[RMDB]
RNA sequence: GGGAACGACUCGAGUAGAGUCGAAAAUUCAGCAGUAUAUUCACUUCCACCAGAUCCCAAGCACUUUGAUGGUUAUCAGCAACAGGAAGUUGUGAUUAUGGAUGAUCUGAACCAAAAUCCAGAUGGAUCUGGCCACUAUAUUCGUAUAGUGGCCAGAAAAAGAAACAACAACAACAAC
Reactivity to DMS in 0.01 (KOAc 150mM, MgCl2 10mM, bicine 150mM(pH8.5), 24C), signal-to-noise 2, nucleotides 027 to 126: u050u040c000a040g000c140a100g000u010a060u040a130u070u000c010a090c000u020u000c000c040a220c030c010a110g030a070u050c000c020c030a070a060g000c160a110c130u000u000u030g000a120u000g010g000u010u010a030u000c060a020g030c090a020a060c090a130g010g000a060a110g000u030u030g000u030g020a110u020u050a060u060g030g000a100u010g000a110u030c010u010g000a130a130c080c050a040a050a060a060u030c030c020a010g030a010u000g010g000a130
Reactivity to 2A3 in 0.01 (KOAc 150mM, MgCl2 10mM, bicine 150mM(pH8.5), 24C), signal-to-noise 1, nucleotides 027 to 126: u070u020c000a040g000c010a000g020u130a100u020a000u140u090c010a000c060u030u000c000c000a040c000c000a000g000a070u000c000c000c000a070a000g100c050a070c070u020u130u260g020a030u130g030g100u100u000a040u110c010a000g050c020a000a100c000a020g000g090a050a010g000u000u030g010u000g000a040u180u000a010u050g080g030a040u000g000a020u040c000u010g040a010a050c020c030a160a120a000a000u000c000c000a020g020a070u180g040g000a070